[RMDB]
RNA sequence: GGGAACGACUCGAGUAGAGUCGAAAAGCUUAGCAGUUCGCUGCUAAGCGACGUUGACGGCCCUCACCGUUGACAAAUCCCAAUGAGGUCAGGUGACUGACAGAUAUUAAGCGUUCGCGCUUAAUAACUCUUGCUAUAGUUUCGACUAUAGCAAGAGAAAAGAAACAACAACAACAAC
Reactivity to DMS in 0.01 (KOAc 150mM, MgCl2 10mM, bicine 150mM(pH8.5), 24C), signal-to-noise 6, nucleotides 027 to 126: g010c000u000u000a000g010c000a010g030u000u010c240g030c000u000g010c010u000a010a000g010c000g010a030c180g000u000u000g010a020c010g000g010c050c110c140u010c200a220c000c000g000u000u000g000a010c020a110a100a120u000c000c000c010a110a080u020g010a120g010g000u000c000a020g010g000u020g000a190c010u000g010a010c040a130g000a230u010a010u000u000a000a010g000c000g030u000u010c250g030c010g020c000u000u000a000a010u000a020a150
Reactivity to 2A3 in 0.01 (KOAc 150mM, MgCl2 10mM, bicine 150mM(pH8.5), 24C), signal-to-noise 2, nucleotides 027 to 126: g000c000u000u010a000g000c000a010g010u050u130c200g090c110u000g000c000u000a000a000g000c000g000a020c060g000u000u020g020a000c000g010g020c050c120c010u050c030a030c000c000g000u000u000g000a000c000a000a100a020u030c000c010c020a010a110u300g090a090g080g000u010c010a000g000g070u060g100a110c010u010g000a000c010a010g130a020u110a010u050u010a000a000g000c010g020u020u070c280g000c000g010c100u000u010a000a000u020a040a030